Background:
The record gives the reactivity of an RNA of 177 nucleotides to 2A3 and DMS. The data come from the RNA Mapping Database (RMDB), library OK1LIB. The 2A3 profile rests on 2,387 reads.

RNA sequence: GGGAACGACUCGAGUAGAGUCGAAAAACUUCAAUUCCAGCUUGCCUUACAAUUGGUGCAGCUAAUGCCUGAGCACCAUAAAUCCAAUAAGGAUUGGUAGAAUUUAAAUAGCUCAUAAAGAAAAUUGAAUAGUUUCCAGAUUCGUCUGGAAACUAUUAAAAGAAACAACAACAACAAC
Reactivity to 2A3 in 0.01 (KOAc 150mM, MgCl2 10mM, bicine 150mM(pH8.5), 24C), signal-to-noise 5, nucleotides 027 to 126: a000c050u120u050c050a040a060u090u020c020c010a010g030c030u020u100g000c000c010u100u130a120c040a140a230u090u080g020g000u010g000c030a010g000c030u140a140a070u180g020c010c040u070g050a020g000c000a010c000c000a000u130a020a000a000u000c010c000a050a140u170a300a060g030g040a050u000u030g010g010u040a060g060a100a050u050u160u210a130a160a110u090a040g010c000u050c100a080u220a180a090a050g220a070a090a040a110u130u120g000
Reactivity to DMS in 0.01 (KOAc 150mM, MgCl2 10mM, bicine 150mM(pH8.5), 24C), signal-to-noise 3, nucleotides 027 to 126: a060c070u010u020c080a040a110u020u010c070c050a050g000c030u010u020g000c010c010u010u030a070c120a100a060u030u010g010g000u000g000c030a060g050c040u000a120a110u050g000c060c080u000g000a100g010c030a090c030c000a050u010a040a020a020u000c020c030a160a110u030a110a190g010g000a050u000u000g000g030u000a100g000a120a090u020u020u020a030a060a090u020a110g010c020u000c130a080u030a050a050a140g010a100a070a060a120u030u000g000